[RMDB]
RNA sequence: GGGAACGACUCGAGUAGAGUCGAAAAGGGGACGUUACGGAUUCGACGGGGGUAGUUCGGUCUUCUGUGGCGUGUCGAGGGGUCGGCCUCGUUAAAACGCAUCAGCCAUAACUGGCAAAACUAACACACAACUCGCAGCAGCUUAAUAGCUACUACGGAUCUAAAUAUUCUUCGGAAUAUUUAGAUCAAAAGAAACAACAACAACAAC
Reactivity to 2A3 in 0.01 (KOAc 150mM, MgCl2 10mM, bicine 150mM(pH8.5), 24C), signal-to-noise 5, nucleotides 027 to 156: g010g000g000g010a000c010g020u050u040a030c020g020g070a070u080u150c060g030a020c040g030g010g000g020g020u020a040g060u100u090c090g020g040u020c020u070u000c020u050g020u030g020g010c000g020u040g050u070c010g020a020g010g020g000g010u180c010g020g120c000c000u010c020g060u050u170a020a030a000a000c000g000c010a060u070c070a040g030c030c000a040u050a170a040c080u070g010g000c000a030a060a020a030c060u090a060a010c020a000c020a000c000a100a130c060u050c070g030c020a030g000c000a000g000c010u050u060a100a040u070a250g010c010u020a010c010u030a030c050g080
Reactivity to DMS in 0.01 (KOAc 150mM, MgCl2 10mM, bicine 150mM(pH8.5), 24C), signal-to-noise 2, nucleotides 027 to 156: g000g000g040g000a090c050g060u000u010a090c070g030g000a190u000u000c040g040a070c060g010g020g020g050g050u000a050g020u010u010c050g010g060u000c020u000u000c040u010g040u000g030g030c040g020u010g000u010c030g070a070g030g010g040g040u010c080g010g010c000c000u000c010g030u020u000a040a030a140a120c070g000c020a140u000c120a180g030c000c010a080u010a090a130c180u020g000g000c000a050a070a060a060c110u010a030a070c050a100c090a040c060a100a110c060u010c010g030c000a000g020c000a020g020c020u000u020a100a130u000a120g020c010u000a000c000u000a020c010g010
Chemical mapping of a 207-nucleotide RNA with 2A3 and DMS. Reactivities are given for positions 27 through 156. DMS adducts were read by reverse transcription with MarathonRT. Source: RMDB library ARCHII, as collected in RNAgym. Reactivities are rounded to 0.1 and cut off at 0 and 3. High DMS reactivity at an A or C suggests that its Watson-Crick edge is free.